[RMDB]
RNA sequence: GGGAACGACUCGAGUAGAGUCGAAAAGUGUCUCGGACAGCGGUUCGAUUCCGCUCAGCUCCAUUCCCCCGACCCACCGCCCCGCAGGCGGUGCGUCAUCCCGGGGCUGCAAUGGUUUCGACGGGGCUUCCUUUGAAAGCUUCGGCUUUCAAAGGAAAAAAGAAACAACAACAACAAC
Reactivity to DMS in 0.01 (KOAc 150mM, MgCl2 10mM, bicine 150mM(pH8.5), 24C), signal-to-noise 3, nucleotides 027 to 126: g000u010g000u000c030u010c000g000g010a080c090a030g000c030g000g020u020u010c100g030a300u010u020c000c000g040c040u010c030a030g010c000u030c000c030a300u030u000c040c000c000c060c080g000a010c010c040c000a010c000c010g000c000c000c120c300g000c200a070g010g000c000g000g010u010g000c300g010u010c000a130u020c030c050c000g000g010g000g000c010u050g010c300a040a040u060g000g000u010u000u000c080g000a040c000g000g000g000g000c040
Reactivity to 2A3 in 0.01 (KOAc 150mM, MgCl2 10mM, bicine 150mM(pH8.5), 24C), signal-to-noise 1, nucleotides 027 to 126: g160u100g000u000c010u000c030g020g040a050c030a020g020c000g010g000u040u040c040g010a030u020u030c000c000g000c000u010c000a000g010c000u000c010c010a030u030u090c000c000c000c010c010g010a000c000c050c000a000c000c000g000c000c000c020c090g200c020a020g000g000c000g000g010u010g010c010g000u000c010a080u030c020c000c000g000g010g030g020c000u000g000c030a040a170u070g070g000u000u000u060c050g020a020c000g000g020g010g000c000
An RNA of 177 nucleotides, treated with DMS and 2A3 and read out base by base.
Conditions: 150 mM KOAc, 10 mM MgCl2 and 150 mM bicine (pH 8.5), 24 C.
For DMS, 2,311 sequencing reads were counted.
DMS (dimethyl sulfate) methylates the pairing face of unpaired adenines and cytosines.
2A3 adducts were read by reverse transcription with SuperScript II with manganese.